[RMDB]
Chemical mapping of a 177-nucleotide RNA with DMS and 2A3. For DMS, 2,217 sequencing reads were counted. The reactions ran in a buffer of 150 mM KOAc, 10 mM MgCl2 and 150 mM bicine (pH 8.5), at 24 C. Source: RMDB library OK1LIB, as collected in RNAgym.

RNA sequence: GGGAACGACUCGAGUAGAGUCGAAAAGACGGAAGCGAACUGCCGUUAAAUAUCGUGCUCAGCAUCGGACAAAGCAACGAAAGCCAGUCCGCAGAAAGCAAGCAGGACUGCAUUGGUGUUCAGCACCGCUACUCAUGGCAUUCGUGCCAUGAGUAGCAAAAGAAACAACAACAACAAC
Reactivity to DMS in 0.01 (KOAc 150mM, MgCl2 10mM, bicine 150mM(pH8.5), 24C), signal-to-noise 2, nucleotides 027 to 126: g000a050c020g000g020a090a060g010c030g010a040a010c060u030g040c000c010g000u010u000a080a090a170u070a120u060c090g010u010g000c060u000c070a010g010c000a040u000c000g000g010a120c120a070a020a110g040c030a050a130c140g050a140a140a100g030c200c000a120g000u030c020c010g000c030a070g040a180a070a100g030c180a140a100g060c030a130g030g000a010c070u000g000c010a000u020u010g000g000u000g000u010u010c250a060g000c010a030c100c100
Reactivity to 2A3 in 0.01 (KOAc 150mM, MgCl2 10mM, bicine 150mM(pH8.5), 24C), signal-to-noise 5, nucleotides 027 to 126: g090a000c020g010g040a090a060g090c110g040a070a080c080u110g000c000c000g010u020u030a030a120a010u220a080u110c050g000u030g000c000u010c010a020g010c000a010u000c020g060g000a040c080a100a160a010g000c030a030a110c080g120a100a040a010g020c050c000a010g000u000c000c010g030c010a010g180a050a080a000g080c100a080a010g020c030a060g030g000a020c020u030g000c030a030u010u170g000g000u020g000u030u070c020a010g020c010a030c010c040